[RMDB]
RNA sequence: GGGAACGACUCGAGUAGAGUCGAAAAGGUUGCAUAAUGGCAAAGAUGGGCAAAUACGGUCUCGGCUUCAAAUGGGCCCCAGAAUUUCCAUGGAUGCUUCCGAACGCAUCGGAGAAGUUGGGUAACCAUGACAUCGCUACUUCGGUAGCGAUGUCAUAAAAGAAACAACAACAACAAC
Reactivity to DMS in 0.01 (KOAc 150mM, MgCl2 10mM, bicine 150mM(pH8.5), 24C), signal-to-noise 1, nucleotides 027 to 126: g000g030u000u030g010c000a010u030a200a010u000g000g110c060a000a190a040g020a120u000g000g000g010c020a120a070a110u000a140c090g030g050u000c030u000c130g000g010c000u040u000c250a160a090a130u000g000g000g110c150c000c080c050a130g000a020a150u000u000u000c000c000a210u000g040g000a030u000g000c040u000u080c010c100g030a000a060c140g040c080a170u000c010g000g000a020g050a050a140g000u000u000g000g000g040u030a160a040c040c030